[RMDB]
RNA sequence: GGGAACGACUCGAGUAGAGUCGAAAAUUAACUUUGUCCAUGUCUUUUGCGUCCAUUAAGUGUGUCUGUGCUAAGACUUGGAAAUUGUCUUUUGAAUGUUUCAAUUACACGCCUUCUUAAGCACAGCAUCCUCCCACGGAUUCGUCCGUGGGAGGAUAAAAGAAACAACAACAACAAC
Reactivity to DMS in 0.01 (KOAc 150mM, MgCl2 10mM, bicine 150mM(pH8.5), 24C), signal-to-noise 1, nucleotides 027 to 126: u070u010a050a170c080u000u000u050g000u000c020c050a110u010g000u000c050u000u030u000u000g060c060g020u000c020c000a060u000u080a140a100g060u020g000u000g000u030c000u000g010u000g030c000u000a030a000g000a070c300u000u000g000g030a010a110a050u010u000g020u020c120u000u000u110u010g000a060a200u100g000u000u040u000c010a020a110u000u000a060c110a000c160g000c060c040u040u000c000u000u000a080a000g030c000a020c040a060g000c040
Reactivity to 2A3 in 0.01 (KOAc 150mM, MgCl2 10mM, bicine 150mM(pH8.5), 24C), signal-to-noise 2, nucleotides 027 to 126: u080u010a050a060c020u000u110u090g140u030c000c100a050u060g040u030c060u170u150u060u080g220c060g050u000c030c000a120u170u170a200a050g010u150g000u000g000u130c000u000g030u030g020c000u010a010a010g000a040c120u080u050g050g000a000a120a050u030u140g000u050c120u010u070u010u070g170a230a160u220g090u050u260u160c010a010a030u070u000a000c070a000c040g070c000c000u050u020c000u010u100a050a000g050c000a000c000a000g010c010
Structure probing data (DMS and 2A3) for a 177-nucleotide construct.
2A3 adducts were read by reverse transcription with SuperScript II with manganese.
The RNA was probed in 150 mM KOAc, 10 mM MgCl2 and 150 mM bicine (pH 8.5) at 24 C.